Record summary:
This 207-nucleotide RNA was probed chemically with 2A3 and DMS. The 2A3 profile rests on 941 reads. As a SHAPE reagent, 2A3 marks flexible, mostly unpaired nucleotides at the ribose 2'-OH. Conditions: 150 mM KOAc, 10 mM MgCl2 and 150 mM bicine (pH 8.5), 24 C.
[RMDB]
RNA sequence: GGGAACGACUCGAGUAGAGUCGAAAAUUUGUGCUACUUUUCCUUCAUGCUUAUUAUGAAUUUGAAAUCGUGUGCUAUAAAAAGUAUUUGGCUGUAUGUGCUUUUAUAAUGAAAGUAAUUUAAUUGGGCAUUCUGCCUCCACAGAUCAGCAAGGGUCUCACUGCUGUUAAUUCGUUAACAGCAGUGAAAAAGAAACAACAACAACAAC
Reactivity to 2A3 in 0.01 (KOAc 150mM, MgCl2 10mM, bicine 150mM(pH8.5), 24C), signal-to-noise 3, nucleotides 027 to 156: u130u060u120g060u050g030c010u040a040c000u200u040u050u120c010c000u050u090c030a030u040g010c020u170u070a080u110u140a070u230g110a110a190u110u170u240g100a140a110a090u110c070g050u030g030u020g080c040u030a030u120a160a110a050a060a030g060u040a120u050u070u120g060g000c030u030g020u080a070u020g000u000g000c000u120u020u030u000a160u050a100a110u220g000a010a020a100g010u100a020a060u110u120u110a060a050u140u060g030g010g000c020a020u070u060c050u180g020c000c030u030c010c000a050c030a030g030a040u090c010a000g000c030a030a050g110g020g070u030c040
Reactivity to DMS in 0.01 (KOAc 150mM, MgCl2 10mM, bicine 150mM(pH8.5), 24C), signal-to-noise 1, nucleotides 027 to 156: u010u000u000g010u010g000c020u010a060c000u010u010u000u000c020c220u010u000c050a070u010g000c140u010u010a070u010u000a050u030g010a090a050u010u010u000g010a050a080a090u000c010g040u010g020u010g030c040u010a080u000a050a050a130a110a100g010u010a070u000u000u000g070g070c040u000g020u000a100u000g050u010g020c000u030u000u010u000a060u010a050a180u010g000a070a050a070g000u020a040a070u020u000u000a020a200u000u010g000g010g030c000a120u000u020c120u000g010c030c010u000c110c030a080c030a050g000a070u000c040a100g030c030a100a080g020g000g000u000c020
The DMS profile rests on 2,266 reads.